[RMDB]
RNA sequence: GGGAACGACUCGAGUAGAGUCGAAAAAAUGGAGUGCGAUUUAUCGGACGGAACAGCCAUGGUGUAUCUAACGCCAGAUAUGAUGCUAUCUAUCCAUGAUUUCUAUAAUCAUUUUCAGAUUGCUAUCGUCUUCCCUGUUAUUCGUAACAGGGAAGACAAAAGAAACAACAACAACAAC
Reactivity to DMS in 0.01 (KOAc 150mM, MgCl2 10mM, bicine 150mM(pH8.5), 24C), signal-to-noise 2, nucleotides 027 to 126: a050a060u000g010g000a060g020u000g030c070g010a100u000u000u000a030u010c050g030g000a050c040g000g000a040a120c120a040g000c040c050a090u000g000g020u000g000u000a080u010c190u000a090a090c080g010c010c030a050g010a080u010a060u010g020a070u000g010c010u000a060u000c030u010a060u000c110c070a040u000g010a020u000u000u020c240u000a090u000a010a030u010c000a020u010u000u000u000c140a090g010a060u000u020g010c070u010a060u010c090
Reactivity to 2A3 in 0.01 (KOAc 150mM, MgCl2 10mM, bicine 150mM(pH8.5), 24C), signal-to-noise 3, nucleotides 027 to 126: a010a000u120g060g010a130g030u110g020c020g010a000u110u070u130a120u130c050g000g040a000c020g040g010a090a030c030a030g060c030c020a060u020g020g000u050g000u040a100u110c130u070a150a020c050g030c010c010a000g040a030u160a070u200g030a030u050g020c020u000a000u060c000u020a010u030c030c030a010u020g000a020u020u100u070c140u130a130u210a130a010u000c010a020u030u030u090u040c020a010g010a040u000u040g070c030u070a060u120c030